[RMDB]
Chemical mapping of a 177-nucleotide RNA with DMS.

RNA sequence: GGGAACGACUCGAGUAGAGUCGAAAAAACGAUAAGUUGAGUAAUUUUAACAUCAUGGGAUCUUUAAUGCUUAUAGCUGUUUUAGUUUUAGCAGUGUAUGUUAUUACCAAAGUUAUUAACAAAUUAAUAAGGGUUAAGGUUUCGACCUUAACCCUUAAAAAGAAACAACAACAACAAC
Reactivity to DMS in 0.01 (KOAc 150mM, MgCl2 10mM, bicine 150mM(pH8.5), 24C), signal-to-noise 1, nucleotides 027 to 126: a060a030c100g000a040u030a020a040g000u000u000g000a170g020u010a020a050u010u060u020u050a000a020c030a010u010c100a050u000g040g000g000a080u030c050u020u060u000a030a010u000g000c010u000u030a080u000a070g040c020u000g030u000u020u070u010a050g020u040u020u010u000a130g010c020a030g000u010g050u020a020u020g000u020u000a020u000u000a030c000c020a020a070a050g020u010u000a010u000u010a060a040c040a020a050a060u010u010a020a140
It was measured as part of the RMDB library RFM100. The RNA was probed in 150 mM KOAc, 10 mM MgCl2 and 150 mM bicine (pH 8.5) at 24 C. Reactivities are given for positions 27 through 126. DMS adducts were read by reverse transcription with MarathonRT.